An RNA of 177 nucleotides, treated with 2A3 and DMS and read out base by base. Source: RMDB library OK1LIB, as collected in RNAgym. The DMS profile rests on 4,458 reads. Conditions: 150 mM KOAc, 10 mM MgCl2 and 150 mM bicine (pH 8.5), 24 C. DMS adducts were read by reverse transcription with MarathonRT.
RNA sequence: GGGAACGACUCGAGUAGAGUCGAAAAGCGAAAUAGUAUGUCGGCCUGGUUGCGGUAGUUGCCCUGGUCAUCGAAGGCCUCGGGGGCGUAGGUGACUGCGACCGCCACCGCGACCCGUUGCGACGGCCACCGCUGUACAUUUCGAUGUACAGCGGUGAAAAGAAACAACAACAACAAC
Reactivity to 2A3 in 0.01 (KOAc 150mM, MgCl2 10mM, bicine 150mM(pH8.5), 24C), signal-to-noise 6, nucleotides 027 to 126: g100c070g080a060a070a010u170a060g160u130a150u200g020u050c020g020g040c030c020u020g010g010u010u010g000c000g000g000u010a020g030u020u090g020c010c000c020u040g030g010u010c000a020u040c020g140a170a060g140g030c010c010u050c120g180g020g040g020g010c010g010u040a030g000g020u030g000a040c010u030g000c010g010a030c000c010g000c020c000a000c000c000g020c010g000a010c000c010c020g040u070u120g090c050g010a040c000g010g000c010
Reactivity to DMS in 0.01 (KOAc 150mM, MgCl2 10mM, bicine 150mM(pH8.5), 24C), signal-to-noise 3, nucleotides 027 to 126: g010c080g000a070a080a130u010a110g000u020a060u040g010u000c060g000g020c160c020u010g000g010u000u030g010c050g010g020u000a060g010u000u000g020c020c120c030u000g040g000u020c000a000u010c030g000a190a300g030g000c010c020u000c260g010g000g000g000g000c010g000u020a100g020g000u010g010a040c020u000g000c300g000a030c040c100g000c010c020a020c000c000g000c000g010a000c000c010c110g000u010u010g010c010g000a080c040g010g000c070